[RMDB]
RNA sequence: GGGAACGACUCGAGUAGAGUCGAAAACUAAUGGCCUGGCGAUGGGCCUCACGGGCGAGUGCGAAGGUCAGAGAAGAGAUUGUUCGGUGGCAGGAGAGAGUGGCCACCCUCUCGGGUGCACAGACAAGUAUGCUUCUACCUUCGGGUAGAAGCAUACAAAAGAAACAACAACAACAAC
Reactivity to DMS in 0.01 (KOAc 150mM, MgCl2 10mM, bicine 150mM(pH8.5), 24C), signal-to-noise 2, nucleotides 027 to 126: c040u000a120a120u010g030g010c030c010u000g010g040c070g000a190u010g020g000g020c040c000u000c140a040c120g000g040g000c060g030a100g030u000g000c070g010a140a070g010g000u000c040a040g000a100g000a140a100g020a110g030a040u000u000g020u010u000c010g040g000u000g020g030c040a160g040g000a160g000a110g020a110g020u000g010g010c140c020a050c000c010c010u020c040u000c100g000g020g030u000g020c040a050c100a120g000a090c140a060a070
Reactivity to 2A3 in 0.01 (KOAc 150mM, MgCl2 10mM, bicine 150mM(pH8.5), 24C), signal-to-noise 1, nucleotides 027 to 126: c010u060a060a180u080g030g000c010c000u020g020g010c050g070a100u130g020g070g000c060c020u040c000a050c060g030g000g030c020g030a050g030u090g010c000g070a100a040g030g040u050c090a000g030a010g020a250a060g020a000g030a060u060u140g080u140u140c100g000g060u030g000g000c030a000g020g050a090g010a000g010a010g100u050g050g010c000c000a010c020c000c000u000c000u010c040g050g000g000u100g010c030a060c000a050g070a050c010a190a040